[RMDB]
RNA sequence: GGGAACGACUCGAGUAGAGUCGAAAAUUAUUCCCCAACUUCCAAGUUAGGGGUUGGACAAGUGUAAGGCAAGUGCAGUUUGUGAGAACCUGUGAAUGUAUGGGAAAUAGCAGGAACAGAGAGUGAACCUGGCUCAUCUGGGGAAUCAGGAGUAGGAAUCAUUACUGGUGUUCGCACCAGUAAUGAUAAAAGAAACAACAACAACAAC
Reactivity to 2A3 in 0.01 (KOAc 150mM, MgCl2 10mM, bicine 150mM(pH8.5), 24C), signal-to-noise 2, nucleotides 027 to 156: u090u030a040u070u100c000c000c000c010a030a040c030u290u130c050c020a130a020g010u050u040a050g080g010g010g020u000u030g020g000a040c120a150a040g030u050g050u240a090a060g060g010c070a050a030g020u050g040c020a040g030u040u100u080g030u080g020a020g020a020a040c010c000u020g030u030g090a110a040u070g020u140a100u130g010g060g000a040a070a070u090a050g010c030a030g000g040a030a040c020a000g060a000g000a000g080u030g010a020a030c010c020u020g020g020c020u010c020a150u050c080u090g030g000g020g000a010a050u070c050a030g010g010a010g020u020a020g000g060a100
Reactivity to DMS in 0.01 (KOAc 150mM, MgCl2 10mM, bicine 150mM(pH8.5), 24C), signal-to-noise 2, nucleotides 027 to 156: u000u000a150u000u010c020c020c000c010a020a070c040u000u010c060c090a110a180g010u000u000a070g000g020g000g020u000u000g000g020a070c070a070a120g010u020g040u020a050a120g010g000c050a090a090g010u000g050c040a040g020u000u000u000g020u010g000a200g020a120a070c020c030u010g030u000g020a150a070u000g000u010a060u020g010g010g000a020a050a060u000a110g020c020a070g000g010a060a090c070a050g000a090g000a050g030u020g020a030a160c040c010u000g020g000c010u000c060a030u000c020u000g000g020g030g010a060a030u000c030a070g030g000a100g010u000a060g010g010a100